[RMDB]
RNA sequence: GGGAACGACUCGAGUAGAGUCGAAAAGGGAUGCUGCGACUGCGACGAGAUCCAGGCCGUGAUGUGGUAAUACAGAACCGACCGGCGGUUCAGCUGAUCACCAAAGCGGCGCCCCACCGGCAGGUGGAGUAAGUGCGUAUUUCGAUACGCACUUACUAAAAGAAACAACAACAACAAC
Reactivity to 2A3 in 0.01 (KOAc 150mM, MgCl2 10mM, bicine 150mM(pH8.5), 24C), signal-to-noise 9, nucleotides 027 to 126: g080g010g010a050u090g050c030u030g010c040g050a050c050u050g030c040g050a070c020g040a070g000a070u020c030c010a030g050g010c010c030g060u060g030a080u100g030u050g020g010u050a070a040u140a180c080a040g040a030a010c010c010g070a080c040c050g140g070c020g010g000u020u020c010a010g010c050u070g040a060u050c020a010c040c020a040a050a010g020c010g010g000c000g050c010c020c000c000a010c010c000g080g050c090a070g000g020u010g020g010
Reactivity to DMS in 0.01 (KOAc 150mM, MgCl2 10mM, bicine 150mM(pH8.5), 24C), signal-to-noise 8, nucleotides 027 to 126: g000g000g000a040u010g020c050u010g010c050g000a070c040u000g000c070g000a110c100g010a100g000a050u000c030c040a090g010g020c010c100g010u000g010a190u010g020u000g010g000u000a080a080u030a120c150a110g000a030a030c020c010g010a270c150c110g020g010c010g000g010u000u000c010a080g010c130u010g010a080u010c040a020c030c070a030a100a240g010c050g000g000c050g000c080c070c000c020a040c010c020g000g020c190a080g010g020u010g000g000